[RMDB]
RNA sequence: GGGAACGACUCGAGUAGAGUCGAAAACAUUUGUUUUCACAUACCCCAGAAAUGCAAUUGGCACACAUAACCACGUAUCACAGCAUACACGGGGUAGAGAGAAACAAUCGCUAGCAUAUAACUUUAAAUUAGCUUGUUCAAUGCCACGCAUCAAAGACCUAGUACAUACGUUCGCGUAUGUACUAGGAAAAGAAACAACAACAACAAC
Reactivity to 2A3 in 0.01 (KOAc 150mM, MgCl2 10mM, bicine 150mM(pH8.5), 24C), signal-to-noise 7, nucleotides 027 to 156: c020a010u030u050u110g010u010u030u030u040c040a080c020a080u040a040c000c000c000c010a030g090a060a180a010u030g010c020a060a180u160u130g040g020c060a040c010a000c020a090u180a200a040c060c020a060c090g050u070a050u150c080a080c100a150g010c010a020u040a040c060a020c150g010g000g010g010u000a000g000a000g010a000g010a010a030a010c000a010a030u070c090g000c070u040a020g040c050a060u110a040u100a270a150c070u150u140u260a050a200a140u130u110a090g050c020u040u060g030u040u060c060a070a050u040g000c000c040a040c110g030c020a050u060c080a130a050a020g030a020
Reactivity to DMS in 0.01 (KOAc 150mM, MgCl2 10mM, bicine 150mM(pH8.5), 24C), signal-to-noise 2, nucleotides 027 to 156: c030a200u000u010u000g010u010u010u000u000c030a150c060a160u010a060c020c000c000c050a150g010a140a110a010u000g000c020a150a150u000u000g010g000c010a120c070a190c160a150u000a110a100c040c030a090c080g020u000a060u000c080a260c200a120g000c090a100u000a090c030a090c130g020g000g050g040u010a040g000a200g010a270g000a030a050a080c040a030a030u020c050g010c010u000a050g000c050a100u010a070u010a040a040c050u000u000u020a000a010a190u010u000a010g010c040u000u000g010u000u010c030a040a110u010g020c000c030a040c150g000c010a000u010c070a010a040a080g000a200